[RMDB]
RNA sequence: GGGAACGACUCGAGUAGAGUCGAAAAAGGCAAGUGGGGUCAGAACUUGAACCAGCGCUGGGUCGGAGAAGGGAAAGUGGCUGUGCACUUGGAUUAUGUCAGUGAUUAGCUUUGUAACAGAGAACAGUCUGAAAGUCAACUUCGGUUGACUUUCAGAAAAAGAAACAACAACAACAAC
Reactivity to DMS in 0.01 (KOAc 150mM, MgCl2 10mM, bicine 150mM(pH8.5), 24C), signal-to-noise 1, nucleotides 027 to 126: a040g020g020c050a020a090g010u030g010g010g030g020u000c070a020g000a110a080c140u010u000g000a120a050c060c010a110g020c140g000c080u000g010g010g000u000c080g000g010a100g000a100a070g000g000g000a040a050a050g010u000g010g010c030u000g020u000g010c100a060c040u000u000g010g000a030u030u020a090u000g020u010c040a060g010u010g000a070u000u010a070g010c040u000u010u000g030u010a090a110c140a070g030a110g010a100a060c120a090g000